[RMDB]
RNA sequence: GGGAACGACUCGAGUAGAGUCGAAAAGAUAUGGAUAUUGUCUUGGCUUUUGACGACUACUCGGAAACGAGUACUCGAUAAGCCAACAAUAUCCUAAGUCAAACAUACUACCUUCGGGUAGUAUGAAGGAAACUAUAAUCUUCGGAUUAUAGUUUCCAAAAGAAACAACAACAACAAC
Reactivity to DMS in 0.01 (KOAc 150mM, MgCl2 10mM, bicine 150mM(pH8.5), 24C), signal-to-noise 5, nucleotides 027 to 126: g010a030u000a300u000g000g000a010u000a010u000u000g000u000c110u010u000g010g040c010u000u000u000u010g000a150c140g010a010c110u010a010c000u000c000g010g000a060a090a130c000g010a010g000u000a000c130u000c010g020a120u010a010a020g010c010c000a020a020c010a000a000u000a000u000c000c000u010a020a070g000u000c030a120a110a290c000a000u000a000c000u000a010c010c000u000u010c210g020g010g010u000a010g000u000a000u000g010a070a130
Reactivity to 2A3 in 0.01 (KOAc 150mM, MgCl2 10mM, bicine 150mM(pH8.5), 24C), signal-to-noise 6, nucleotides 027 to 126: g010a000u040a020u100g000g010a000u010a000u010u010g050u060c150u130u040g010g000c020u090u180u160u300g180a080c030g010a000c010u000a000c000u000c000g010g020a030a030a020c000g000a000g000u010a010c000u000c010g050a070u050a290a060g000c000c000a000a000c000a000a000u000a000u000c000c000u000a060a000g020u000c010a040a090a040c000a000u010a000c000u000a000c000c000u030u090c300g160g010g000u000a000g000u010a010u010g000a020a050